An RNA of 177 nucleotides, treated with DMS and read out base by base. Source: RMDB library TTRDEL, as collected in RNAgym.

[RMDB]
RNA sequence: GGGAACGACUCGAGUAGAGUCGAAAAGAUAUGGAAUUCUUCAACAGCAUAUGGUCGGAAACGACCAUUAUGACAUGAAGAAUUCCUAAGUCAAACAAUUUUGACAUCUUCGGAUGUCAAAAUUGAAUCGCAACGUCAGGUUCGCCUGACGUUGCGAAAAAGAAACAACAACAACAAC
Reactivity to DMS in 0.01 (KOAc 150mM, MgCl2 10mM, bicine 150mM(pH8.5), 24C), signal-to-noise 1, nucleotides 027 to 126: g000a030u000a230u000g010g000a020a000u010u010c000u010u000c000a020a090c300a210g010c010a010u000a010u000g000g010u000c000g010g010a040a050a110c000g020a020c000c000a000u000u000a010u000g000a100c120a200u000g020a010a000g000a020a000u000u000c000c000u000a000a050g000u000c010a190a120a200c000a010a010u010u000u000u010g010a000c000a000u000c000u000u000c300g030g000a050u000g010u000c000a000a000a000a000u000u000g000a120a080
DMS adducts were read by reverse transcription with MarathonRT. Conditions: 150 mM KOAc, 10 mM MgCl2 and 150 mM bicine (pH 8.5), 24 C.